Structure probing data (2A3 and DMS) for a 177-nucleotide construct.
The reactions ran in a buffer of 150 mM KOAc, 10 mM MgCl2 and 150 mM bicine (pH 8.5), at 24 C.
2A3 adducts were read by reverse transcription with SuperScript II with manganese.
DMS adducts were read by reverse transcription with MarathonRT.
The 2A3 profile rests on 1,223 reads.
Values cover nucleotides 27 to 126.
[RMDB]
RNA sequence: GGGAACGACUCGAGUAGAGUCGAAAAACUAGCAUCCUUGCCAGCGUCGCGUUAAACGUGUAAAGGUCUUUGAAAUCCACGAUGAGGCUGUGCCGACCCAUCGAAAUCAUGCUCUUGACGCGCUCUCGAGCUCAUAAGACUUCGGUCUUAUGAGCUCAAAAGAAACAACAACAACAAC
Reactivity to 2A3 in 0.01 (KOAc 150mM, MgCl2 10mM, bicine 150mM(pH8.5), 24C), signal-to-noise 1, nucleotides 027 to 126: a000c040u030a020g000c000a060u030c010c010u000u060g000c000c020a040g010c010g100u030c030g020c020g020u040u070a080a220a190c010g000u070g030u060a070a100a010g020g000u030c040u000u100u060g130a160a160a040u060c030c000a020c050g040a020u030g030a090g030g000c040u100g100u110g080c030c020g110a170c000c040c000a070u060c010g050a050a040a030u040c020a030u020g000c000u000c000u090u050g060a030c000g010c000g030c020u000c010u010c030
Reactivity to DMS in 0.01 (KOAc 150mM, MgCl2 10mM, bicine 150mM(pH8.5), 24C), signal-to-noise 2, nucleotides 027 to 126: a090c020u000a080g000c050a050u000c090c060u000u010g090c020c020a110g000c030g000u000c020g000c010g070u000u000a020a120a200c070g040u000g010u020a110a110a100g000g020u010c090u000u000u000g000a130a070a040u000c130c030a220c040g030a090u000g020a110g020g060c000u010g040u020g010c070c070g000a180c030c000c010a010u020c060g030a040a050a070u010c070a050u000g000c030u010c020u000u000g000a080c040g010c070g000c120u000c010u000c120